RNA sequence: GGGAACGACUCGAGUAGAGUCGAAAAAAAGAGCGUUUAGAACAAAUCAUUGGAAGUUUGACGGGGUAAUUAUCAAUGGAUAAACAAGUUAGAAAUACAACAGAAAUUGUACGUUUGGCGAAGCAGAGGGAAUUCAUCUAUUCGUAGAUGAAUUCCCAAAAGAAACAACAACAACAAC
Reactivity to DMS in 0.01 (KOAc 150mM, MgCl2 10mM, bicine 150mM(pH8.5), 24C), signal-to-noise 2, nucleotides 027 to 126: a050a030a040g000a060g020c050g000u000u010u030a080g020a090a060c050a050a050a030u030c060a120u040u050g020g000a060a030g000u000u020u000g000a160c080g000g000g010g000u000a050a050u020u020a000u000c050a110a050u000g020g020a100u010a030a040a140c160a050a050g000u040u010a010g000a030a000a060u000a060c030a060a040c120a100g000a120a080a070u010u000g010u010a020c130g000u030u020u000g010g000c060g000a060a090g000c060a080g000a130
Reactivity to 2A3 in 0.01 (KOAc 150mM, MgCl2 10mM, bicine 150mM(pH8.5), 24C), signal-to-noise 2, nucleotides 027 to 126: a000a000a000g060a020g010c030g000u040u030u000a080g060a040a000c010a040a050a020u160c020a020u000u070g100g010a020a010g020u080u120u020g040a030c000g000g000g000g070u050a110a040u070u040a150u080c010a030a020u070g170g020a010u090a100a010a010c040a030a040g040u070u080a070g040a030a080a050u150a030c020a030a000c010a080g100a060a050a040u110u040g000u030a010c090g010u000u070u110g070g010c060g100a070a010g000c050a000g070a080